[RMDB]
RNA sequence: GGGAACGACUCGAGUAGAGUCGAAAAGAUAUGGACCCGAGAGAUAACUCGAGGCAUCGGAAACGAUGCUACCCACCGAGGUUAUGGAAUGGGUCCUAAGUCAAACUAGCCUCUUCGGAGGCUAGAAUCCUUAACUCGUCUUCGGACGAGUUAAGGAAAAAGAAACAACAACAACAAC
Reactivity to DMS in 0.01 (KOAc 150mM, MgCl2 10mM, bicine 150mM(pH8.5), 24C), signal-to-noise 2, nucleotides 027 to 126: g010a010u020a300u000g000g000a010c000c000c000g020a200g010a300g000a010u010a090a040c000u000c020g000a120g030g000c000a000u000c000g020g020a100a090a160c000g030a000u000g000c000u000a060c020c030c150a300c100c000g000a000g010g010u000u000a020u000g020g000a170a210u000g000g020g020u000c010c000u020a000a120g020u010c030a090a030a160c030u000a000g010c020c000u010c000u000u020c260g020g020a010g050g000c000u000a010g000a000a080
Reactivity to 2A3 in 0.01 (KOAc 150mM, MgCl2 10mM, bicine 150mM(pH8.5), 24C), signal-to-noise 1, nucleotides 027 to 126: g050a050u090a050u170g000g000a000c000c000c000g070a050g000a000g000a110u030a080a010c000u000c000g010a010g000g010c000a000u020c010g000g060a080a030a020c000g000a000u010g000c010u010a070c100c050c000a090c040c000g000a040g250g120u060u020a000u020g100g090a130a070u040g000g020g000u000c000c000u000a030a010g010u020c050a000a040a110c000u000a000g000c030c000u090c000u080u050c300g210g010a020g000g070c000u000a000g000a000a000